Structure probing data (DMS) for a 177-nucleotide construct. It was measured as part of the RMDB library OK2TRN. Values cover nucleotides 27 to 126.
[RMDB]
RNA sequence: GGGAACGACUCGAGUAGAGUCGAAAAAUGUGCACAACAUCAUGGAGGGCUUGAGGGCGGCAGCAGCCGCCGUGCAGGCAGCUGAGUUCAGAAAAGCAUAUGGCCACCUCUCCCAGGAACCCCAGUCAACUACCCUGCUAUUCGUAGCAGGGUAGUUAAAAGAAACAACAACAACAAC
Reactivity to DMS in 0.01 (KOAc 150mM, MgCl2 10mM, bicine 150mM(pH8.5), 24C), signal-to-noise 2, nucleotides 027 to 126: a010u010g000u010g020c060a070c070a060a050c050a020u010c050a050u000g010g000a130g000g000g030c030u010u000g010a100g010g020g030c040g030g010c050a110g010c170a050g010c000c000g020c000c030g010u000g010c100a050g010g000c000a040g000c030u010g000a140g040u000u000c110a080g000a110a090a110a130g010c050a050u020a090u010g000g010c030c090a100c050c000u000c060u010c020c010c020a120g010g020a060a080c050c000c010c020a080g010u000c140